This 177-nucleotide RNA was probed chemically with DMS and 2A3. DMS adducts were read by reverse transcription with MarathonRT. Reactivities are given for positions 27 through 126. The RNA was probed in 150 mM KOAc, 10 mM MgCl2 and 150 mM bicine (pH 8.5) at 24 C.
RNA sequence: GGGAACGACUCGAGUAGAGUCGAAAAGAAAGAAACCUCUUGAGGUACCUGAAUUACCAAAAGCUUUAUGUAUUCUGAAGUUAUUGAAAAUAAGAGCUUUUGGGAAUUCAGGUAGUUCAGGAGUGAACACACGCUAAUUAUUCGUAAUUAGCGUGUGAAAAGAAACAACAACAACAAC
Reactivity to DMS in 0.01 (KOAc 150mM, MgCl2 10mM, bicine 150mM(pH8.5), 24C), signal-to-noise 4, nucleotides 027 to 126: g010a130a110a080g000a120a120a100c120c010u010c000u000u000g000a010g010g000u000a010c000c000u000g000a010a010u000u000a040c000c000a000a000a010a010g010c000u000u000u000a040u030g010u010a080u010u000c000u010g000a150a200g020u030u040a090u020u020g000a020a030a060a080u070a040a060g000a010g010c000u010u010u000u000g000g000g000a010a010u000u000c000a010g000g000u000a000g000u000u000c000a010g000g000a010g000u010g020a070a150
Reactivity to 2A3 in 0.01 (KOAc 150mM, MgCl2 10mM, bicine 150mM(pH8.5), 24C), signal-to-noise 7, nucleotides 027 to 126: g060a010a120a000g110a030a080a030c030c000u000c000u010u000g000a010g040g060u020a000c000c000u000g000a000a000u020u050a050c000c000a000a000a000a000g000c000u070u060u030a130u190g130u060a160u060u080c020u080g190a160a130g160u190u150a190u290u180g040a030a040a000a040u070a060a040g020a010g090c000u020u000u000u010g000g000g000a010a000u000u000c010a000g010g000u000a000g000u000u000c000a000g000g000a000g000u010g010a040a000